RNA sequence: GGGAACGACUCGAGUAGAGUCGAAAAUUGUCCGGGUUCGCCCGGACAAAGCGGGAGGCGACCGGAGGCCUCCUCCCAGGCGAUCCCACGCCUGGCUCCGGAGCGUGAUGACCUUCGGGUCAUCAAAGAAAGCUAUGAGUUUCGACUCAUAGCUUUCAAAAGAAACAACAACAACAAC
Reactivity to 2A3 in 0.01 (KOAc 150mM, MgCl2 10mM, bicine 150mM(pH8.5), 24C), signal-to-noise 1, nucleotides 027 to 126: u050u020g020u000c010c000g010g000g010u040u030c150g080c000c000c000g000g020a000c000a000a000a000g020c040g000g040g010a030g000g000c050g100a080c030c030g030g030a030g040g030c000c020u010c010c000u000c010c010c000a010g000g000c000g000a030u030c000c000c010a000c040g010c000c000u010g010g030c010u010c000c000g050g000a060g050c100g060u090g010a010u000g000a010c010c010u000u090c270g090g000g000u000c000a000u010c000a000a000a000
Reactivity to DMS in 0.01 (KOAc 150mM, MgCl2 10mM, bicine 150mM(pH8.5), 24C), signal-to-noise 2, nucleotides 027 to 126: u010u010g010u000c000c010g010g000g020u000u010c270g000c000c010c000g010g030a000c020a010a010a030g000c170g000g020g000a030g010g010c020g040a090c070c030g000g000a090g020g000c000c000u000c010c000u000c080c010c000a030g010g020c000g000a080u010c010c000c010a270c050g010c000c000u010g000g000c060u000c020c000g000g000a270g010c170g010u000g010a010u000g020a020c000c010u000u010c240g020g000g000u000c000a010u000c010a010a080a110
Structure probing data (2A3 and DMS) for a 177-nucleotide construct. The 2A3 profile rests on 2,306 reads. For DMS the reverse transcriptase was MarathonRT. The reactions ran in a buffer of 150 mM KOAc, 10 mM MgCl2 and 150 mM bicine (pH 8.5), at 24 C. It was measured as part of the RMDB library M2PK50.